[RMDB]
RNA sequence: GGGAACGACUCGAGUAGAGUCGAAAAGAUAUGGACAAAUUCAGACAUGGAAGACGGUCGGAAACGACCGUAUUCCAACAGCUGACGGUUUGUCCUAAGUCAAAACCAUCGUCUUCGGACGAUGGAACACAUGCAUUUACUUCGGUAAAUGCAUGUGAAAAGAAACAACAACAACAAC
Reactivity to 2A3 in 0.01 (KOAc 150mM, MgCl2 10mM, bicine 150mM(pH8.5), 24C), signal-to-noise 3, nucleotides 027 to 126: g010a000u020a000u070g010g000a000c010a000a040a000u090u070c010a040g020a060c170a260u300g010g000a000a000g010a000c000g010g000u010c000g000g010a000a020a000c000g000a000c000c000g000u000a000u000u000c000c010a010a000c030a060g000c020u030g000a030c070g080g000u000u010u030g000u000c000c000u000a010a010g010u010c000a010a010a080a280c000c010a000u010c000g020u000c000u040u100c300g180g010a000c000g000a000u000g010g000a060a010
Reactivity to DMS in 0.01 (KOAc 150mM, MgCl2 10mM, bicine 150mM(pH8.5), 24C), signal-to-noise 6, nucleotides 027 to 126: g000a020u000a070u020g000g000a000c000a010a010a020u000u000c010a020g000a040c060a300u020g010g000a010a010g000a020c000g000g020u000c000g000g010a010a010a040c000g010a010c000c000g010u000a000u000u010c000c010a110a060c150a140g020c020u010g010a030c300g000g000u000u000u000g010u000c010c000u000a010a090g000u000c010a100a080a140a210c010c000a000u000c000g010u000c000u000u010c270g030g000a010c000g000a000u000g000g000a080a120

Structure probing data (2A3 and DMS) for a 177-nucleotide construct. It was measured as part of the RMDB library TTRDES. For 2A3 the reverse transcriptase was SuperScript II with manganese. The RNA was probed in 150 mM KOAc, 10 mM MgCl2 and 150 mM bicine (pH 8.5) at 24 C.